[RMDB]
This 177-nucleotide RNA was probed chemically with 2A3 and DMS. The DMS profile rests on 1,840 reads. It was measured as part of the RMDB library OK1LIB. Values cover nucleotides 27 to 126. DMS adducts were read by reverse transcription with MarathonRT.

RNA sequence: GGGAACGACUCGAGUAGAGUCGAAAACAUGAUAACAAAACAGGAACAGCCCUUAAUAUGCUCGAGAAUCCUGUCCUUCUAACAUGUGAUGCGAAUAGGGAUAUGUUUUUGAGAAAUUUUAUGAAUGUGCUCCUAGAGUUUUCGAACUCUAGGAGCAAAAAGAAACAACAACAACAAC
Reactivity to 2A3 in 0.01 (KOAc 150mM, MgCl2 10mM, bicine 150mM(pH8.5), 24C), signal-to-noise 2, nucleotides 027 to 126: c010a040u120g130a130u190a090a020c040a030a120a000a000c060a050g020g050a070a000c010a000g270c000c000c000u080u080a150a030u020a150u180g020c000u040c000g080a100g010a040a010u030c000c020u010g050u000c020c010u030u000c040u110a040a030c010a030u080g020u170g100a010u050g040c020g080a030a080u080a160g000g050g040a010u100a050u080g020u040u070u000u020u000g070a070g210a110a180a050u120u150u020u010a090u150g090a130a130u180g050
Reactivity to DMS in 0.01 (KOAc 150mM, MgCl2 10mM, bicine 150mM(pH8.5), 24C), signal-to-noise 1, nucleotides 027 to 126: c040a040u080g010a000u000a050a070c120a080a100a050a050c030a120g030g000a060a030c030a030g020c000c000c000u010u030a120a060u030a090u000g010c030u000c040g050a050g030a050a090u010c000c010u000g010u000c010c050u000u020c060u000a080a060c070a070u020g000u040g000a040u040g000c000g000a020a140u010a030g000g010g030a010u010a080u000g010u000u000u000u000u000g000a160g010a040a170a060u030u000u010u010a070u000g000a050a020u040g030